The data come from the RNA Mapping Database (RMDB), library TTRINS. Chemical mapping of a 177-nucleotide RNA with DMS.

[RMDB]
RNA sequence: GGGAACGACUCGAGUAGAGUCGAAAAGAUAUGGAUAUCUGAAGACGCACGCACUAUCGAACACAGAAUCGGAAACGAUUCUGUGUUCGACGAAUGCGUGAACUACGUCGUAGGAUAUCCUAAGUCACAGAUCGAUACUGUUCGCAGUAUCGAUCUGAAAAGAAACAACAACAACAAC
Reactivity to DMS in 0.01 (KOAc 150mM, MgCl2 10mM, bicine 150mM(pH8.5), 24C), signal-to-noise 1, nucleotides 027 to 126: g000a010u000a300u030g000g000a000u000a030u020c000u000g040a230a300g000a000c020g010c000a000c020g010c020a010c080u000a300u000c010g020a010a040c000a010c000a030g000a000a000u000c010g020g000a150a030a140c000g000a010u000u000c000u000g030u000g000u070u000c000g000a020c150g020a010a120u000g010c000g000u000g000a040a010c100u040a300c010g010u000c000g010u000a300g010g000a010u000a000u000c000c000u010a000a090g000u010c020a300